[RMDB]
RNA sequence: GGGAACGACUCGAGUAGAGUCGAAAACCAGUGAAGACGCUGGGCACCAUCAUGAAGGAGCUGAAGCACGACUGGGUGGAUGUCAUGAAAGUUGACAUAGAGGGGGCCGAGUGGGGCUUCCUGGCAGUGGGGAAGGUUAAUUCGUUAACCUUCCCCAAAAAGAAACAACAACAACAAC
Reactivity to DMS in 0.01 (KOAc 150mM, MgCl2 10mM, bicine 150mM(pH8.5), 24C), signal-to-noise 1, nucleotides 027 to 126: c000c000a040g020u000g020a130a070g010a090c070g000c000u010g010g020g010c040a090c020c010a090u010c090a120u000g040a170a110g010g000a150g040c030u000g000a120a090g010c040a090c080g020a090c100u000g000g020g030u010g020g000a060u000g000u000c010a020u000g000a060a080a140g000u000u000g010a040c010a030u000a140g010a050g010g010g010g010g020c010c020g010a090g020u010g000g000g000g000c010u000u000c020c010u030g010g000c110a150g010